Source: RMDB library VIROID, as collected in RNAgym. The record gives the reactivity of an RNA of 177 nucleotides to 2A3 and DMS. The DMS profile rests on 2,028 reads. DMS adducts were read by reverse transcription with MarathonRT. For 2A3 the reverse transcriptase was SuperScript II with manganese.

RNA sequence: GGGAACGACUCGAGUAGAGUCGAAAACUGUGGGUCACCCCCCGACCACAAUGCUUAAAAGAAAAAUCAGGGAGAGGAAGAGACUUACCUGUCGUCGUCGACGAAGGCUGGUAAGCCGAGUUGGCGAGAACAGAUUACGGUUCGCCGUAAUCUGUUCAAAAGAAACAACAACAACAAC
Reactivity to 2A3 in 0.01 (KOAc 150mM, MgCl2 10mM, bicine 150mM(pH8.5), 24C), signal-to-noise 1, nucleotides 027 to 126: c050u050g040u060g100g020g110u170c130a300c000c010c030c020c000c000g000a000c000c000a020c020a040a140u110g040c010u140u160a120a090a040a030g170a000a110a050a010a030u080c030a010g040g010g000a120g030a000g070g060a080a030g110a020g010a120c030u000u110a220c010c010u000g020u040c030g030u000c000g020u010c010g000a020c000g000a100a040g010g000c020u080g030g300u280a110a000g000c000c030g020a010g000u000u030g000g020c020g000a000
Reactivity to DMS in 0.01 (KOAc 150mM, MgCl2 10mM, bicine 150mM(pH8.5), 24C), signal-to-noise 3, nucleotides 027 to 126: c100u000g040u000g030g010g020u000c050a210c090c000c000c000c010c010g000a040c010c030a040c030a070a090u010g020c110u000u010a060a080a060a100g020a020a070a070a080a080u010c010a040g000g000g010a080g000a060g000g010a110a120g000a190g010a090c030u000u000a070c020c020u020g000u030c120g030u000c010g050u000c030g010a010c010g000a130a140g000g010c000u010g000g010u010a080a040g020c000c000g010a230g010u000u000g010g010c000g000a050